[RMDB]
RNA sequence: GGGAACGACUCGAGUAGAGUCGAAAAGAUCUGUUAAGCCUACGAAGUCGCCAGUAGGCUUUCGCACACGCAUACUCUUCGAAGUAUGGUCUUCGGACGGUCGACUUCGUGUGCGUGCAGAUCGAAAGGGUGAGACGGCCUUCGGGUUGUCUCACCCAAAAGAAACAACAACAACAAC
Reactivity to DMS in 0.01 (KOAc 150mM, MgCl2 10mM, bicine 150mM(pH8.5), 24C), signal-to-noise 2, nucleotides 027 to 126: g010a000u000c000u000g000u000u030a060a140g000c000c010u010a000c000g000a090a060g020u030c040g020c050c010a120g000u010a030g010g040c000u000u030u010c040g000c000a000c030a020c000g000c130a020u010a020c020u000c140u090u030c170g000a050a020g000u020a070u020g010g010u010c010u000u060c070g010g010a030c180g010g050u010c140g000a050c130u020u010c010g000u010g000u010g000c020g020u000g000c000a020g010a020u000c000g000a060a060a120
Reactivity to 2A3 in 0.01 (KOAc 150mM, MgCl2 10mM, bicine 150mM(pH8.5), 24C), signal-to-noise 4, nucleotides 027 to 126: g000a000u010c010u050g020u080u190a040a010g000c000c000u000a010c000g050a110a030g130u090c040g050c070c020a030g000u030a010g000g000c000u010u000u000c000g010c000a010c000a000c020g040c010a010u000a010c010u010c080u300u120c090g030a020a000g010u060a120u120g160g060u040c000u030u030c040g060g010a020c010g010g060u130c060g070a070c010u050u040c020g020u010g000u010g020c000g000u010g000c010a010g000a000u010c000g010a110a020a010
Structure probing data (DMS and 2A3) for a 177-nucleotide construct. The data come from the RNA Mapping Database (RMDB), library OK1LIB. For DMS the reverse transcriptase was MarathonRT. For 2A3 the reverse transcriptase was SuperScript II with manganese.